[RMDB]
RNA sequence: GGGAACGACUCGAGUAGAGUCGAAAAGAAAACGAAAGGAAAAACCAAGAAAGAAACUGAAAACACACGCAAAUACACCAAAGGCAAGGUGUGAGCCGUAAAGCGUGUGAAAACUAAGGAGGAAAAACGGAUAGUAGUAGUUCGCUACUACUAUCCGAAAAGAAACAACAACAACAAC
Reactivity to 2A3 in 0.01 (KOAc 150mM, MgCl2 10mM, bicine 150mM(pH8.5), 24C), signal-to-noise 1, nucleotides 027 to 126: g030a000a030a010a010c050g070a040a060a060g070g120a120a060a010a000a040c020c010a060a000g160a050a150a030g120a130a080a010c070u100g100a020a040a030a000c000a000c000a010c000g000c030a020a090a050u130a030c000a020c000c020a050a080a020g270g020c060a090a170g020g000u000g020u000g040a040g090c040c040g050u100a070a010a020g000c000g020u020g010u000g000a010a030a000a000c060u090a040a030g050g030a060g020g060a040a060a050a000a010
Reactivity to DMS in 0.01 (KOAc 150mM, MgCl2 10mM, bicine 150mM(pH8.5), 24C), signal-to-noise 4, nucleotides 027 to 126: g000a100a050a050a090c070g010a060a110a100g010g000a050a070a040a070a170c070c030a080a100g010a070a070a030g000a090a090a100c050u000g000a080a050a050a110c000a010c000a000c030g030c000a010a120a100u060a020c050a040c000c050a080a090a060g040g040c230a050a060g010g010u000g020u020g000a050g000c120c050g000u010a040a050a130g020c000g000u000g010u000g020a000a000a010a070c130u020a040a060g000g020a070g020g000a100a080a040a080a090
An RNA of 177 nucleotides, treated with 2A3 and DMS and read out base by base. Reactivities are rounded to 0.1 and cut off at 0 and 3. For DMS, 5,443 sequencing reads were counted. Source: RMDB library OK1LIB, as collected in RNAgym.